[RMDB]
RNA sequence: GGGAACGACUCGAGUAGAGUCGAAAAGAUAUGGAAGAGCACCACAUCGAAGAACUACGUCGGAAACGACGUAGGGAGAUGGGUGAACUACUCUUCCUAAGUCAAAGAUAGAAGUUCGCUUCUAUCAGGACAUCUUACUGUUCGCAGUAAGAUGUCCAAAAGAAACAACAACAACAAC
Reactivity to DMS in 0.01 (KOAc 150mM, MgCl2 10mM, bicine 150mM(pH8.5), 24C), signal-to-noise 1, nucleotides 027 to 126: g000a130u000a300u020g010g040a010a000g000a010g000c040a040c020c000a230c010a010u000c000g010a170a250g000a200a230c000u000a010c020g030u010c000g000g010a110a160a200c020g030a000c000g060u000a000g020g010g020a100g000a020u000g000g000g010u000g030a140a030c080u000a300c010u000c000u000u010c060c000u020a010a090g000u000c000a170a100a060g000a010u000a000g010a060a000g030u000u020c300g010c010u000u000c000u000a020u000c000a080
Reactivity to 2A3 in 0.01 (KOAc 150mM, MgCl2 10mM, bicine 150mM(pH8.5), 24C), signal-to-noise 1, nucleotides 027 to 126: g020a030u070a050u180g000g020a000a030g010a000g070c040a010c020c000a300c020a070u090c040g190a300a030g090a070a020c010u010a000c000g000u000c000g000g020a050a040a000c020g000a000c000g000u000a010g020g000g000a070g000a010u040g010g000g040u000g000a020a020c020u220a070c000u000c000u000u030c020c000u000a090a000g040u020c050a280a000a000g020a010u000a010g000a010a000g020u090u190c250g100c210u030u000c000u020a020u010c020a000
The record gives the reactivity of an RNA of 177 nucleotides to DMS and 2A3. For DMS the reverse transcriptase was MarathonRT. The reactions ran in a buffer of 150 mM KOAc, 10 mM MgCl2 and 150 mM bicine (pH 8.5), at 24 C. The DMS profile rests on 798 reads. It was measured as part of the RMDB library TTRDES. The 2A3 profile rests on 2,066 reads.